[RMDB]
RNA sequence: GGGAACGACUCGAGUAGAGUCGAAAAGAUAUGGAAUGAACUACUGGUUCCGGUAGGCGUUGAAAUCGGAAACGAUGGAGCCUAUUGACCAGCAUUCCUAAGUCAAACACGUGCUUCGGCACGUGAACUCCAAGCCAUAGUUCGCUAUGGCUUGGAGAAAAGAAACAACAACAACAAC
Reactivity to 2A3 in 0.01 (KOAc 150mM, MgCl2 10mM, bicine 150mM(pH8.5), 24C), signal-to-noise 1, nucleotides 027 to 126: g000a010u120a040u170g000g000a040a020u020g000a040a050c050u200a050c000u300g020g060u220u070c140c000g000g000u000a000g000g000c070g210u300u100g010a110a070a000u000c010g000g050a070a070a030c000g000a000u020g050g030a030g000c000c000u000a010u010u020g050a010c000c010a000g030c000a000u010u040c000c010u010a140a010g100u030c000a110a000a110c000a000c000g030u010g000c010u120u080c260g120g000c000a010c000g000u010g000a020a020
Reactivity to DMS in 0.01 (KOAc 150mM, MgCl2 10mM, bicine 150mM(pH8.5), 24C), signal-to-noise 2, nucleotides 027 to 126: g010a050u010a300u010g000g030a000a000u000g010a060a010c070u010a300c000u000g010g010u000u030c140c170g000g000u000a000g000g000c000g010u030u000g000a110a160a000u000c000g030g000a170a130a180c040g010a020u000g010g000a140g020c000c000u000a000u010u000g000a070c000c010a030g000c000a010u000u000c000c000u010a050a160g010u010c040a170a100a260c020a020c000g030u000g000c000u010u010c180g040g010c020a000c000g020u000g000a010a090

Source information
Structure probing data (2A3 and DMS) for a 177-nucleotide construct. The reactions ran in a buffer of 150 mM KOAc, 10 mM MgCl2 and 150 mM bicine (pH 8.5), at 24 C. Reactivities are rounded to 0.1 and cut off at 0 and 3. The DMS profile rests on 915 reads. Source: RMDB library TTRDEL, as collected in RNAgym. High 2A3 reactivity points to a flexible backbone, as in loops and unpaired stretches.